[RMDB]
RNA sequence: GGGAACGACUCGAGUAGAGUCGAAAAGUGGUCCAGGAUCCUGAACAGCCCCCCCAGCCCCCCAGAUCAUGGGCCGGUCAGCCGACAAACCUAUAUCCCCUCCCCGAGAUGAGCCCGCGCGGACCACGGUUAUAAUGAUCUUCGGAUCAUUAUAACCAAAAGAAACAACAACAACAAC
Reactivity to 2A3 in 0.01 (KOAc 150mM, MgCl2 10mM, bicine 150mM(pH8.5), 24C), signal-to-noise 5, nucleotides 027 to 126: g040u040g000g010u010c000c010a020g040g040a060u070c030c020u040g020a080a040c020a060g020c010c000c000c000c000c000c010a000g010c010c010c000c010c010c000a010g000a050u040c030a070u100g010g020g020c010c010g000g020u050c020a020g020c020c010g020a030c040a020a100a010c010c010u070a050u020a060u180c010c000c000c000u000c000c020c000c010g040a030g010a090u090g010a020g010c020c000c000g000c020g000c040g010g010a000c010c000a010c010
Reactivity to DMS in 0.01 (KOAc 150mM, MgCl2 10mM, bicine 150mM(pH8.5), 24C), signal-to-noise 4, nucleotides 027 to 126: g010u010g010g020u000c020c040a100g010g010a070u010c020c050u000g010a080a130c090a120g000c020c030c020c010c010c010c040a110g020c040c020c020c010c020c040a060g010a040u010c080a080u020g000g000g010c040c030g010g020u020c080a060g010c040c000g010a110c080a060a090a120c030c060u020a080u030a170u010c000c010c010c020u000c010c020c000c020g000a110g000a080u020g000a080g000c010c010c020g020c070g000c060g000g000a040c020c010a040c060
An RNA of 177 nucleotides, treated with 2A3 and DMS and read out base by base. The data come from the RNA Mapping Database (RMDB), libraries RFM100 and RFMREP. The reactions ran in a buffer of 150 mM KOAc, 10 mM MgCl2 and 150 mM bicine (pH 8.5), at 24 C. For DMS the reverse transcriptase was MarathonRT.